[RMDB]
RNA sequence: GGGAACGACUCGAGUAGAGUCGAAAAGGUGCAGCGGCGUGCCGGUAGUCGUACACCUGCUGGCUCAGAAGUUGGUGCUGAGGGGUCGGAAAGCCGCGUGUUAGGCGCCCCUUUUGGCGCCAAUGAAGCAUCUCGCGAGCUUCGGCUUGCGAGGUGCAAAAGAAACAACAACAACAAC
Reactivity to 2A3 in 0.01 (KOAc 150mM, MgCl2 10mM, bicine 150mM(pH8.5), 24C), signal-to-noise 9, nucleotides 027 to 126: g040g000u060g030c070a060g020c070g040g000c020g060u090g040c010c000g030g020u050a030g020u030c050g020u030a020c010a010c030c000u010g030c030u040g030g020c000u020c060a070g020a160a020g050u020u020g010g010u020g000c000u020g010a010g000g010g000g000u110c090g080g010a140a090a020g000c000c000g040c050g010u110g080u070u120a060g010g000c010g060c000c000c000c020u010u040u050u140g020g000c000g000c000c000a000a010u070g000a050a010
Reactivity to DMS in 0.01 (KOAc 150mM, MgCl2 10mM, bicine 150mM(pH8.5), 24C), signal-to-noise 8, nucleotides 027 to 126: g000g010u000g010c060a060g010c020g000g000c010g010u020g010c050c030g000g000u020a090g010u000c030g010u010a190c050a040c040c010u000g010c110u020g000g010c020u010c040a120g000a100a170g010u000u000g000g010u000g000c010u000g010a020g010g000g000g010u020c120g010g010a060a080a100g010c000c010g010c140g000u030g000u020u020a100g000g010c010g010c010c000c040c030u000u000u010u010g000g000c000g020c000c000a010a010u000g000a130a140

The data come from the RNA Mapping Database (RMDB), library OK1LIB. The record gives the reactivity of an RNA of 177 nucleotides to 2A3 and DMS. For DMS the reverse transcriptase was MarathonRT. For 2A3 the reverse transcriptase was SuperScript II with manganese. Reactivities are given for positions 27 through 126.